[RMDB]
RNA sequence: GGGAACGACUCGAGUAGAGUCGAAAAGGCAACUGAUAUCUCCACCCUAGUCAUUCGUAUCAUCAUGAAUAUGGAUGUGCUGGAGUGUAUGCGCCCGGACAAAGCGAAGGGUGACCGCGUAUCGGUACGUUUACGUAGACUUCGGUCUACGUAAACGAAAAGAAACAACAACAACAAC
Reactivity to DMS in 0.01 (KOAc 150mM, MgCl2 10mM, bicine 150mM(pH8.5), 24C), signal-to-noise 3, nucleotides 027 to 126: g020g030c100a090a050c010u000g010a020u000a040u000c010u000c110c010a040c000c010c010u010a020g010u000c000a020u010u010c000g070u000a010u000c030a190u000c290a170u010g010a070a060u000a020u000g000g000a020u000g010u020g000c000u010g000g010a010g010u000g020u000a070u010g000c060g010c000c000c020g000g000a220c100a070a100a100g040c070g000a300a160g000g010g020u000g000a110c120c100g000c100g000u010a020u000c020g000g000u000a280
Reactivity to 2A3 in 0.01 (KOAc 150mM, MgCl2 10mM, bicine 150mM(pH8.5), 24C), signal-to-noise 4, nucleotides 027 to 126: g060g020c030a030a010c030u030g020a030u040a030u030c030u000c000c010a010c020c000c010u030a010g000u010c000a000u000u010c010g000u020a010u030c050a000u030c070a190u190g140a210a010u110a010u020g020g000a000u010g050u070g010c000u010g000g010a050g000u010g030u040a060u150g030c020g000c010c010c000g000g000a050c110a180a300a040g190c300g150a020a010g000g010g030u010g050a050c030c040g030c040g030u010a010u060c000g000g030u060a040
The record gives the reactivity of an RNA of 177 nucleotides to DMS and 2A3. The RNA was probed in 150 mM KOAc, 10 mM MgCl2 and 150 mM bicine (pH 8.5) at 24 C. For DMS the reverse transcriptase was MarathonRT. Source: RMDB library OK2TST, as collected in RNAgym.